[RMDB]
RNA sequence: GGGAACGACUCGAGUAGAGUCGAAAAACGCACAAUAGGAUCAGAGUCACCAGUUCCAGGUGAGGCCAAGAGCGUCCACAGCAAUACAGGUCCAUGUGGGAACAAAGUCACCAGGACUGGGAGGCCAGAUGGGGACUAGAUUCACCAGUUCCUGGUGGUUAGAUGAUGCGUUCGCGCAUCAUCUAACAAAAGAAACAACAACAACAAC
Reactivity to 2A3 in 0.01 (KOAc 150mM, MgCl2 10mM, bicine 150mM(pH8.5), 24C), signal-to-noise 2, nucleotides 027 to 156: a010c090g020c000a060c000a020a280u130a140g000g010a050u050c030a040g020a040g120u040c020a010c020c030a020g050u080u030c010c060a010g070g010u030g020a080g040g010c010c000a080a000g050a040g050c020g010u100c090c040a020c020a010g060c040a010a010u090a200c020a030g000g060u040c020c020a030u090g000u020g100g000g000a030a090c040a020a050a070g020u040c000a000c010c000a000g000g010a000c000u000g000g000g020a020g000g030c020c070a060g100a100u190g050g010g010g000a020c040u060a040g090a140u080u070c050a060c090c000a000g000u090u080c000c000u000g000g000u010g000